[RMDB]
RNA sequence: GGGAACGACUCGAGUAGAGUCGAAAAGACCUCGGUGUUCGACCGCGCCGAUGUCACCUACCGCCAAUUCACGGAACUCCACGGGCAAGCCCGCGACACACGGCGGGAGGCGCACGUGGUUGAGCUGGUUCAUGACAUCAUUCGUGAUGUCAUGAACAAAAGAAACAACAACAACAAC
Reactivity to 2A3 in 0.01 (KOAc 150mM, MgCl2 10mM, bicine 150mM(pH8.5), 24C), signal-to-noise 6, nucleotides 027 to 126: g020a010c010c000u000c010g010g010u030g030u100u190c100g090a100c050c060g010c000g010c010c000g030a020u020g010u010c020a030c050c010u050a080c000c020g060c030c030a080a110u120u110c050a050c060g050g010a060a050c030u000c000c010a020c030g030g000g000c030a060a080g070c020c010c000g020c000g110a050c040a050c050a010c200g130g000c000g010g030g010a020g060g040c090g000c020a040c030g010u000g010g000u030u040g020a030g010c030u080g020
Reactivity to DMS in 0.01 (KOAc 150mM, MgCl2 10mM, bicine 150mM(pH8.5), 24C), signal-to-noise 2, nucleotides 027 to 126: g030a070c000c010u000c010g000g010u000g030u020u030c050g010a040c110c120g000c000g000c040c050g010a030u000g000u010c010a100c020c020u000a090c100c010g000c010c050a120a110u000u020c110a110c030g000g000a060a100c190u000c010c030a000c000g000g050g000c000a220a170g000c040c020c030g000c030g040a040c230a140c090a080c160g010g020c000g000g000g000a070g010g040c300g000c010a000c010g010u000g000g000u000u030g000a030g000c010u030g010